[RMDB]
RNA sequence: GGGAACGACUCGAGUAGAGUCGAAAACUCAAUGACUUCGGUCAUUGAGAAAGGACAAAAGUCCAUCUGAGCAGCUAUGAGCUCAUACAUCGUCAUAGCAAAAAACACACACGUUCGCGUGUGUGAACCUAAAAGUGAGGUUCGCCUCACUUUUAGGAAAAGAAACAACAACAACAAC
Reactivity to 2A3 in 0.01 (KOAc 150mM, MgCl2 10mM, bicine 150mM(pH8.5), 24C), signal-to-noise 2, nucleotides 027 to 126: c010u010c000a000a000u020g000a010c000u030u050c170g090g000u010c000a010u000u000g000a000g000a030a050a000g010g000a030c050a060a300a060a070g010u050c010c000a040u020c080u070g000a000g000c010a000g000c010u020a000u020g020a010g010c000u000c010a050u220a120c090a070u150c210g040u010c000a020u010a000g000c020a000a030a030a010a030a000c030a000c010a010c010a000c000g020u050u050c220g010c000g070u020g010u000g000u000g010a030a050
Reactivity to DMS in 0.01 (KOAc 150mM, MgCl2 10mM, bicine 150mM(pH8.5), 24C), signal-to-noise 3, nucleotides 027 to 126: c000u000c000a010a000u000g000a010c000u000u010c220g020g010u000c000a000u010u010g000a010g000a050a070a120g010g000a000c010a080a090a150a170g030u000c000c020a150u000c090u010g010a010g010c020a160g000c020u010a000u000g000a010g000c010u000c010a040u020a070c200a040u010c180g000u010c010a010u000a010g010c000a010a050a040a070a060a090c010a010c000a000c000a010c020g030u010u020c230g010c040g030u000g010u000g000u010g000a050a060

Source: RMDB library M2PK50, as collected in RNAgym. The record gives the reactivity of an RNA of 177 nucleotides to 2A3 and DMS. 2A3 adducts were read by reverse transcription with SuperScript II with manganese. For DMS, 2,257 sequencing reads were counted.